An RNA of 170 nucleotides, treated with DMS and 2A3 and read out base by base. The reactions ran in a buffer of 150 mM KOAc, 10 mM MgCl2 and 150 mM bicine (pH 8.5), at 24 C. It was measured as part of the RMDB library 15KLIB. The DMS profile rests on 23,726 reads. DMS adducts were read by reverse transcription with MarathonRT.

RNA sequence: GGGAACGACUCGAGUAGAGUCGAAAAGCAAGAAGCUAUUUUGAUGUCUGAAGACGUUAAGUUAAACCCUUCAGAAGAUUUUAUAAAGCACGUCCGCACUAAUGGUGGUUACAAUUCUUGGCAUUUAAAGCCCAAGGGUUCGCCCUUGGGAAAAGAAACAACAACAACAAC
Reactivity to DMS in 0.01 (KOAc 150mM, MgCl2 10mM, bicine 150mM(pH8.5), 24C), signal-to-noise 5, nucleotides 027 to 129: g000c050a090a080g000a050a090g040c020u000a080u010u010u010u000g020a000u000g030u030c010u010g020a000a040g030a110c260g040u010u050a050a060g000u030u060a010a000a010c000c020c010u010u020c050a050g020a030a040g020a120u040u020u010u020a090u000a060a050a040g040c040a090c000g020u030c010c050g020c030a060c070u000a050a050u040g000g000u000g020g050u040u020a030c000a060a090u000u000c070u000u010g010g010c020a090u080u020u020a060a080a100g010
Reactivity to 2A3 in 0.01 (KOAc 150mM, MgCl2 10mM, bicine 150mM(pH8.5), 24C), signal-to-noise 7, nucleotides 027 to 129: g030c020a020a070g040a060a010g080c020u040a180u060u170u040u110g100a060u050g060u020c010u020g020a040a010g020a030c060g020u080u080a040a040g020u010u110a070a100a020c030c000c000u040u030c000a020g010a050a020g000a010u070u060u030u030a170u090a080a090a000g020c020a000c040g020u000c020c000g010c020a020c030u070a050a100u100g060g010u020g010g030u000u040a040c050a030a010u010u010c010u010u020g050g010c010a060u050u120u200a060a080a010g020